Background
Structure probing data (2A3) for a 207-nucleotide construct. The 2A3 profile rests on 3,011 reads. For 2A3 the reverse transcriptase was SuperScript II with manganese. The reactions ran in a buffer of 150 mM KOAc, 10 mM MgCl2 and 150 mM bicine (pH 8.5), at 24 C. It was measured as part of the RMDB library VIROID.
[RMDB]
RNA sequence: GGGAACGACUCGAGUAGAGUCGAAAAGAACUGGCAAAAGGCGGCAGGGAGCUUGUGGAAGGCGAAACAGGAGUAAUCCCGAGAGAAACAGGGUUUUCACCCUUCCUUUCUGAUUCGGUUUCCUUCCUUUGCGCGCCACUCGACCCCUCGCCCCCUUGAUAUAGCAUAGCUUCGGCUAUGCUAUAUCAAAAGAAACAACAACAACAAC
Reactivity to 2A3 in 0.01 (KOAc 150mM, MgCl2 10mM, bicine 150mM(pH8.5), 24C), signal-to-noise 4, nucleotides 027 to 156: g050a060a060c070u080g080g020c090a050a100a060a080g020g000c040g000g000c000a000g020g020g010a110g020c010u020u010g000u010g000g030a020a010g060g040c000g000a020a030a030c300a150g010g000a000g010u040a010a010u060c030c010c000g000a000g000a000g000a030a040a140c300a120g030g020g010u090u060u210u300c080a050c010c000c000u010u030c000c000u040u010u000c080u040g190a300u060u020c010g000g000u000u030u000c000c000u000u050c000c000u000u010u010g000c020g000c000g000c000c000a000c000u000c010g200a300c010c000c000c000u030c040g010c000c000c000c000c010u030u040